[RMDB]
RNA sequence: GGGAACGACUCGAGUAGAGUCGAAAAGAUAUGGAGCGUAGAGCGAGGAUCUAUCAGGUCGGAAACGACCUAUAGGGAGCUCUGAUCUCCUAAGUCAAACCCGAGAUAAGUUCGCUUAUCUCGGGAAGUUCAUUGAACACUUCGGUGUUCAAUGAACAAAAGAAACAACAACAACAAC
Reactivity to 2A3 in 0.01 (KOAc 150mM, MgCl2 10mM, bicine 150mM(pH8.5), 24C), signal-to-noise 1, nucleotides 027 to 126: g010a000u060a000u140g000g020a030g000c040g060u190a020g000a000g010c070g100a270g020g180a170u010c010u000a020u050c220a030g000g000u000c000g040g010a060a020a010c010g020a000c020c000u000a000u000a000g010g030g060a080g030c000u000c000u020g020a020u030c000u000c010c000u010a000a050g020u000c040a110a040a070c000c000c000g000a000g010a020u010a000a010g040u080u150c160g080c130u000u000a000u000c020u010c000g010g010g030a000a000
Reactivity to DMS in 0.01 (KOAc 150mM, MgCl2 10mM, bicine 150mM(pH8.5), 24C), signal-to-noise 2, nucleotides 027 to 126: g000a020u000a160u000g000g010a010g020c270g020u000a020g010a000g070c000g000a180g000g000a060u000c000u000a000u000c240a000g040g010u010c000g020g000a040a040a110c000g000a000c000c020u000a000u000a010g020g000g010a050g010c000u000c010u010g020a050u000c000u000c000c000u010a040a090g010u000c010a080a110a200c000c000c000g000a010g000a000u000a010a010g000u000u020c230g010c000u000u000a000u010c000u000c000g030g000g000a000a000